[RMDB]
RNA sequence: GGGAACGACUCGAGUAGAGUCGAAAAGAUAUGGAUCAACUACGAUGCUAGGAAAUGAUCUCUCAUCGUACUCGGAAACGAGUACGUGCGAUCACUUCCUUGGACCAUCGUAGUUGAUCCUAAGUCAGCUUGUGUAACGGUUCGCCGUUACACAAGCAAAAGAAACAACAACAACAAC
Reactivity to DMS in 0.01 (KOAc 150mM, MgCl2 10mM, bicine 150mM(pH8.5), 24C), signal-to-noise 2, nucleotides 027 to 126: g000a050u020a300u000g000g000a000u000c000a000a020c000u010a030c020g020a000u000g030c030u000a020g020g000a000a010a010u000g010a020u000c010u000c170u000c150a090u000c020g020u030a000c000u000c000g020g000a130a160a140c020g000a030g000u000a000c000g050u000g000c300g000a020u000c000a000c030u000u000c000c010u000u010g000g000a110c300c010a000u000c000g000u000a000g010u000u000g000a000u000c000c000u000a000a020g010u000c050a150

An RNA of 177 nucleotides, treated with DMS and read out base by base. The reactions ran in a buffer of 150 mM KOAc, 10 mM MgCl2 and 150 mM bicine (pH 8.5), at 24 C. It was measured as part of the RMDB library TTRINS. DMS (dimethyl sulfate) methylates the pairing face of unpaired adenines and cytosines.